[RMDB]
RNA sequence: GGGAACGACUCGAGUAGAGUCGAAAAUUGGAAAAUAUCGAUCAGGAUUGAGCAAGGAAUGCAAAAUAUUGAUCGUUAAUUGGCACGGAAUGAGCGCUAAACCAUCCAUCGCCCAAGCCAGACAACGCGCCCAAUGAUAUCCAAGUCAGAAAGCUGGGUCACUUAGAUCAUUCGUGAUCUAAGUGACAAAAGAAACAACAACAACAAC
Reactivity to 2A3 in 0.01 (KOAc 150mM, MgCl2 10mM, bicine 150mM(pH8.5), 24C), signal-to-noise 3, nucleotides 027 to 156: u070u040g050g060a090a040a040a030u140a030u040c010g010a000u000c000a010g060g020a040u010u030g050a050g050c030a060a100g180g100a300a150u110g000c000a000a010a060a000u070a010u020u010g010a000u010c000g010u000u020a050a060u060u110g030g040c020a010c080g020g030a060a080u090g020a120g080c040g020c120u110a090a040a090c020c020a010u010c020c010a050u090c070g020c010c010c010a020a000g020c000c010a010g020a070c040a100a020c050g020c030g040c030c000c030a040a050u090g020a020u020a000u050c030c010a060a000g040u010c000a010g110a070a120a000g000c050u070g030g040
Reactivity to DMS in 0.01 (KOAc 150mM, MgCl2 10mM, bicine 150mM(pH8.5), 24C), signal-to-noise 1, nucleotides 027 to 156: u000u010g050g000a160a160a060a050u000a110u000c040g040a060u020c020a030g000g010a080u000u030g020a300g000c010a010a140g150g000a130a120u000g000c010a030a120a010a020u000a050u030u000g000a010u000c000g000u010u000a030a150u010u000g030g000c070a080c010g050g000a050a140u010g030a170g010c050g000c050u000a110a050a040c010c010a120u000c010c080a090u000c110g010c000c030c020a030a090g000c030c010a040g020a090c080a120a150c020g010c070g000c110c010c030a020a070u010g000a110u010a140u000c050c060a030a120g010u040c050a090g020a090a150a080g000c000u010g010g020